Chemical mapping of a 177-nucleotide RNA with 2A3 and DMS. For DMS the reverse transcriptase was MarathonRT. Source: RMDB library OK2TRN, as collected in RNAgym. As a SHAPE reagent, 2A3 marks flexible, mostly unpaired nucleotides at the ribose 2'-OH. 2A3 adducts were read by reverse transcription with SuperScript II with manganese.
RNA sequence: GGGAACGACUCGAGUAGAGUCGAAAACAUCCUGACCCAGCAAGGCGCUUUGCACCAGAAUUCCGUAGGCGACUUUGGUGCCGUGGAGAAACUUCUCGGUUUGCGGCAGCACGGUCAGACCGUUAUGAAUGGGAAACACAUUCGUGUGUUUCCCAUUAAAAGAAACAACAACAACAAC
Reactivity to 2A3 in 0.01 (KOAc 150mM, MgCl2 10mM, bicine 150mM(pH8.5), 24C), signal-to-noise 3, nucleotides 027 to 126: c040a080u030c060c010u020g050a060c010c000c000a000g010c050a030a090g070g000c020g000c020u080u130u130g000c000a020c020c010a030g060a130a170u170u100c070c020g100u130a080g000g030c000g010a040c000u070u050u080g100g080u040g000c000c000g020u070g100g060a030g060a080a090a050c130u220u060c020u060c090g170g020u080u150u190g020c010g010g020c000a010g070c000a010c020g000g010u000c000a010g040a130c000c020g050u090u180a100u170g120
Reactivity to DMS in 0.01 (KOAc 150mM, MgCl2 10mM, bicine 150mM(pH8.5), 24C), signal-to-noise 3, nucleotides 027 to 126: c140a130u000c050c020u010g010a070c030c040c060a120g010c060a060a080g010g010c050g020c040u010u020u000g030c050a060c050c010a080g010a050a090u000u000c040c050g060u000a140g010g000c050g000a020c030u000u010u000g010g010u000g010c010c040g030u000g000g000a090g010a070a160a110c170u010u010c060u010c040g020g010u000u010u000g020c010g010g020c010a030g020c020a050c080g000g010u010c020a060g010a150c040c020g000u000u010a070u010g000